Structure probing data (2A3) for a 207-nucleotide construct.

RNA sequence: GGGAACGACUCGAGUAGAGUCGAAAAAAUUUUAUCUUUGCAUUUGCGUACUUGCGAGCCGUUUGAGCCUUUGAUUGAAGCAUUCUGACAAUGAUUCUCGUACAGAUGCUCACACCCGGCGCUCUCCCCGCUGAGAACAAGCAGGCCAAACCUACUCGAGUAAACGUAGCUUCGGCUACGUUUACUCAAAAGAAACAACAACAACAAC
Reactivity to 2A3 in 0.01 (KOAc 150mM, MgCl2 10mM, bicine 150mM(pH8.5), 24C), signal-to-noise 1, nucleotides 027 to 156: a000a010u250u160u170u180a140u040c030u030u070u070g010c020a170u020u050u250g040c040g030u070a130c110u020u070g020c020g050a000g030c010c000g030u050u050u120g010a010g000c000c060u160u070u070g110a150u050u140g080a110a000g000c040a040u120u180c000u000g030a010c030a000a080u210g080a160u300u060c130u040c070g010u050a050c030a000g010a000u000g000c000u000c000a040c000a010c000c010c020g150g000c000g000c000u000c000u030c020c060c000c010g000c010u030g010a060g010a150a070c020a040a100g050c070a010g070g000c020c000a000a070a020c000c000u130a100c010u090c140

For 2A3 the reverse transcriptase was SuperScript II with manganese. The data come from the RNA Mapping Database (RMDB), library OK3TST.